About this RNA
The record gives the reactivity of an RNA of 177 nucleotides to DMS and 2A3.
[RMDB]
RNA sequence: GGGAACGACUCGAGUAGAGUCGAAAAGACGAACGAAAACACAAAUGUUCCUCGGUGCAGAAGGGUCCCUCACAUGAGGAUCACCCAUGUAACUCGGACAGGAUAUGCUUUUGGGAAAAAGAGAGAACCUCAGUCAUGAUUUCGAUCAUGACUGAGGAAAAGAAACAACAACAACAAC
Reactivity to DMS in 0.01 (KOAc 150mM, MgCl2 10mM, bicine 150mM(pH8.5), 24C), signal-to-noise 2, nucleotides 027 to 126: g010a080c150g000a110a160c080g010a020a020a040a020c040a070c120a070a170a090u000g000u020u000c000c010u010c140g010g000u000g000c050a050g010a140a080g000g010g000u020c140c000c000u010c060a150c190a160u030g010a010g000g000a020u020c170a020c020c000c000a080u030g000u000a030a080c020u010c270g030g000a040c040a030g000g010a120u020a050u000g000c000u000u000u000u000g000g000g000a090a040a020a070a040g020a090g000a060g000a050a120
Reactivity to 2A3 in 0.01 (KOAc 150mM, MgCl2 10mM, bicine 150mM(pH8.5), 24C), signal-to-noise 1, nucleotides 027 to 126: g060a020c040g030a110a000c040g050a070a060a060a000c060a000c000a020a080a040u150g020u130u050c020c000u000c050g000g000u000g000c020a010g030a250a130g030g000g050u000c020c060c000u000c000a250c070a230u300g010a040g030g020a020u120c030a000c000c000c020a010u000g030u040a060a080c020u010c060g010g010a010c010a030g050g000a040u050a010u250g020c030u000u060u050u050g010g030g000a040a100a010a020a000g060a000g000a010g010a040a020
For 2A3 the reverse transcriptase was SuperScript II with manganese. Source: RMDB library M2PK90, as collected in RNAgym. The RNA was probed in 150 mM KOAc, 10 mM MgCl2 and 150 mM bicine (pH 8.5) at 24 C.